Chemical mapping of a 177-nucleotide RNA with 2A3 and DMS. The RNA was probed in 150 mM KOAc, 10 mM MgCl2 and 150 mM bicine (pH 8.5) at 24 C. 2A3 adducts were read by reverse transcription with SuperScript II with manganese. Source: RMDB libraries RFM100 and RFMREP, as collected in RNAgym.
RNA sequence: GGGAACGACUCGAGUAGAGUCGAAAAGCGAUGCUGCCCUCCCAGCUGGCCCAUGGGUGACCCUGGGAACAUUAACUGCCUCACAACGUUUGUGCCUCAGUUACCCGUAGAUGUAGUGAGGGUAACAGAAAUCAACAACUUUCGAGUUGUUGAUUUCAAAAGAAACAACAACAACAAC
Reactivity to 2A3 in 0.01 (KOAc 150mM, MgCl2 10mM, bicine 150mM(pH8.5), 24C), signal-to-noise 9, nucleotides 027 to 126: g030c040g060a060u140g040c050u050g010c010c020c010u020c010c010c000a010g020c060u080g030g010c000c000c050a140u160g050g020g030u130g060a160c020c010c020u030g010g010g010a030a000c020a020u090u090a060a040c020u080g010c000c000u030c010a040c020a050a090c070g030u030u080u080g070u070g030c010c010u060c020a040g000u010u020a020c000c000c010g020u100a070g030a190u170g060u120a060g070u040g120a050g010g000g000u000a010a000c010a020
Reactivity to DMS in 0.01 (KOAc 150mM, MgCl2 10mM, bicine 150mM(pH8.5), 24C), signal-to-noise 7, nucleotides 027 to 126: g020c040g010a080u020g010c040u000g010c030c020c030u000c020c030c020a080g010c080u010g010g000c020c020c020a110u010g000g000g010u010g010a110c060c040c040u020g010g010g010a080a080c100a060u020u010a070a120c080u010g000c010c020u010c050a060c070a080a110c110g010u010u000u010g010u010g000c080c010u000c110a070g010u000u000a020c010c000c010g000u010a100g000a100u010g020u010a100g020u010g010a120g000g010g010u000a010a040c050a140